Record summary
Structure probing data (2A3 and DMS) for a 177-nucleotide construct. DMS adducts were read by reverse transcription with MarathonRT. For 2A3 the reverse transcriptase was SuperScript II with manganese. The RNA was probed in 150 mM KOAc, 10 mM MgCl2 and 150 mM bicine (pH 8.5) at 24 C. High DMS reactivity at an A or C suggests that its Watson-Crick edge is free. For 2A3, 1,228 sequencing reads were counted. Source: RMDB library OK2TRN, as collected in RNAgym.

[RMDB]
RNA sequence: GGGAACGACUCGAGUAGAGUCGAAAAAGCGAGUGAGAGCGAGAGAAUGGGUGCACAGUGCAGUUUCUGUGCAUGCAAAAAACAACACCAAACAGCACUGCGAACAACGCACAAAAGGGAGGGUAAAAAUACCGAUACCGUUCGCGGUAUCGGUAUUAAAAGAAACAACAACAACAAC
Reactivity to 2A3 in 0.01 (KOAc 150mM, MgCl2 10mM, bicine 150mM(pH8.5), 24C), signal-to-noise 1, nucleotides 027 to 126: a000g000c040g010a000g020u070g000a120g000a020g050c080g000a050g010a000g020a090a140u070g060g040g000u050g000c000a000c010a010g050u060g000c050a080g070u040u130u040c030u030g020u020g000c010a020u050g060c020a000a080a030a110a000a030c030a000a000c040a010c050c020a000a010a010c020a010g000c020a000c030u050g000c020g030a050a010c070a070a050c050g010c040a020c040a040a060a010a000g000g050g040a080g020g060g040u120a020a160a000
Reactivity to DMS in 0.01 (KOAc 150mM, MgCl2 10mM, bicine 150mM(pH8.5), 24C), signal-to-noise 2, nucleotides 027 to 126: a130g000c050g010a050g020u000g010a050g030a070g000c050g030a120g030a050g020a080a120u010g000g000g010u000g000c030a050c010a010g000u000g020c070a070g020u000u000u000c030u010g000u010g000c040a000u000g020c040a000a020a070a050a050a070c100a070a060c090a070c090c140a060a080a060c080a070g030c060a030c040u000g000c030g010a080a090c170a080a060c080g010c050a040c060a020a010a040a110g000g020g020a150g020g000g000u000a000a040a060
Values cover nucleotides 27 to 126.